[RMDB]
RNA sequence: GGGAACGACUCGAGUAGAGUCGAAAACGGCAUGAUUUCCGUAUCGAGGCCUUCAUAAACGGAAAGCGACAGAAAUACAUUGCCGGGCGUAAAAGCGAUUUGGCUGCUGAAGUCAUUGCCAAAGGCAAUAGCAACGUGGGUUCGCCCACGUUGCUAUAAAAGAAACAACAACAACAAC
Reactivity to 2A3 in 0.01 (KOAc 150mM, MgCl2 10mM, bicine 150mM(pH8.5), 24C), signal-to-noise 2, nucleotides 027 to 126: c000g010g000c000a000u050g000a050u030u000u000c000c000g080u140a140u270c020g040a010g010g070c000c000u140u010c110a180u230a120a110a020c130g080g070a050a080a000g090c000g010a040c040a090g110a000a060a000u210a070c000a000u020u210g000c020c000g030g050g050c100g120u170a110a120a100a000g050c000g020a040u060u050u050g000g030c000u000g000c060u040g060a060a030g080u140c060a030u090u100g000c030c000a010a040a010g040g000c000a000
Reactivity to DMS in 0.01 (KOAc 150mM, MgCl2 10mM, bicine 150mM(pH8.5), 24C), signal-to-noise 1, nucleotides 027 to 126: c010g000g040c010a000u000g020a070u020u010u010c020c030g020u140a050u000c100g030a100g000g000c010c010u000u000c200a170u000a050a130a200c200g000g000a000a020a030g000c000g000a070c060a120g020a000a000a010u000a130c040a000u030u060g070c000c010g000g000g030c050g030u000a000a100a100a090g000c000g000a210u060u000u000g000g030c000u000g000c060u010g060a100a020g030u030c020a010u000u050g010c020c000a070a010a020g020g070c020a040
Source information:
The record gives the reactivity of an RNA of 177 nucleotides to 2A3 and DMS. The data come from the RNA Mapping Database (RMDB), library OK1LIB. The reactions ran in a buffer of 150 mM KOAc, 10 mM MgCl2 and 150 mM bicine (pH 8.5), at 24 C.